[RMDB]
RNA sequence: GGGAACGACUCGAGUAGAGUCGAAAACGCUACUACGACCGCAACGGUCUGCCGGAGGCGUACGAGGGCCACGCCAUCGUGACGUGGGCCCCGUCCGGCGGCGAGUACACCGCCCUGGACCAGGUCGAGGUCACGCUCACCGGUGACGGGCCGCUGCCUCCUCAAUACUCUUCGGAGUAUUGAGGAGAAAAGAAACAACAACAACAAC
Reactivity to 2A3 in 0.01 (KOAc 150mM, MgCl2 10mM, bicine 150mM(pH8.5), 24C), signal-to-noise 1, nucleotides 027 to 156: c000g000c080u040a030c070u120a060c110g110a050c000c130g000c030a080a090c010g000g000u010c000u000g050c000c000g100g000a060g020g000c000g000u090a060c120g000a180g050g000g000c010c000a100c060g030c000c010a130u280c100g100u160g090a150c040g050u020g070g110g030c040c000c000c000g010u000c000c010g050g030c000g000g000c030g000a010g010u120a090c050a010c030c000g010c110c000c000u010g000g000a040c000c030a030g020g040u220c130g230a150g000g060u050c010a000c030g030c020u050c030a300c000c070g000g060u010g000a150c110g010g010g010c090c000g000c040u000g030c010

Notes: Conditions: 150 mM KOAc, 10 mM MgCl2 and 150 mM bicine (pH 8.5), 24 C. An RNA of 207 nucleotides, treated with 2A3 and read out base by base. Values cover nucleotides 27 to 156. It was measured as part of the RMDB library OK3TST.